[RMDB]
RNA sequence: GGGAACGACUCGAGUAGAGUCGAAAAGCACCACUCUAAAGGAUAUUAGGGCAACCGAUCGUAAUCCGGGACAUCAAUUGGUGGUCGAGGAAGAGUUAUCUUUUCUUAUUAACACUGUCUUGAAGUCGGUGCAGAAUCGGUUCGCCGAUUCUGCACCAAAAGAAACAACAACAACAAC
Reactivity to 2A3 in 0.01 (KOAc 150mM, MgCl2 10mM, bicine 150mM(pH8.5), 24C), signal-to-noise 1, nucleotides 027 to 126: g000c000a000c000c000a040c010u010c010u130a150a100a160g080g000a000u100a060u060u190a010g000g170g000c000a010a000c000c000g040a100u060c000g100u060a040a040u000c000c000g000g110g000a010c000a090u000c030a000a030u000u000g000g010u000g000g020u160c140g050a000g070g000a000a000g030a000g130u090u020a190u190c040u030u100u000u020c030u010u080a240u080u080a000a000c010a000c000u000g140u190c140u100u000g000a010a180g120u240c160
Structure probing data (2A3) for a 177-nucleotide construct. Source: RMDB library RFM100, as collected in RNAgym. Conditions: 150 mM KOAc, 10 mM MgCl2 and 150 mM bicine (pH 8.5), 24 C. For 2A3 the reverse transcriptase was SuperScript II with manganese.